[RMDB]
Overview:
Conditions: 150 mM KOAc, 10 mM MgCl2 and 150 mM bicine (pH 8.5), 24 C. This 177-nucleotide RNA was probed chemically with DMS and 2A3. DMS (dimethyl sulfate) methylates the pairing face of unpaired adenines and cytosines. Values are in units of 0.01, from 0 to 300, in steps of 10. DMS adducts were read by reverse transcription with MarathonRT.
RNA sequence: GGGAACGACUCGAGUAGAGUCGAAAAAGCUGCAGCCCCGCAGAGUUAGGACAGCUCAUUUGGCACCCGGCGAGCCCUUCCCAGGCCCGCAGCCCAGAAUAGAGCCGGGGCCCAAGACGCCCACUGGAGUGGAGAACAACUUCGGUUGUUCUCCACUAAAAGAAACAACAACAACAAC
Reactivity to DMS in 0.01 (KOAc 150mM, MgCl2 10mM, bicine 150mM(pH8.5), 24C), signal-to-noise 1, nucleotides 027 to 126: a050g020c020u000g010c140a080g000c000c000c000c060g040c060a000g000a050g030u010u040a060g030g000a020c070a110g000c000u020c080a230u000u000u000g000g000c020a150c040c060c030g000g000c000g000a110g000c040c000c090u000u000c000c000c000a190g000g010c000c000c030g000c010a080g000c020c020c020a250g000a090a070u050a070g000a190g000c010c010g020g000g000g020c060c000c170a160a100g000a220c120g020c000c000c060a050c160u090g020g000
Reactivity to 2A3 in 0.01 (KOAc 150mM, MgCl2 10mM, bicine 150mM(pH8.5), 24C), signal-to-noise 1, nucleotides 027 to 126: a010g040c030u030g010c020a080g100c000c000c010c000g080c060a020g030a050g090u080u120a050g000g130a020c020a030g040c020u030c040a190u060u020u110g010g030c070a160c000c000c000g050g010c030g030a050g010c000c000c000u020u080c000c000c000a000g010g000c030c040c000g000c030a000g000c010c000c000a100g100a120a080u160a060g080a020g030c020c010g030g000g020g010c000c000c000a010a000g010a010c020g000c000c000c000a000c020u070g000g010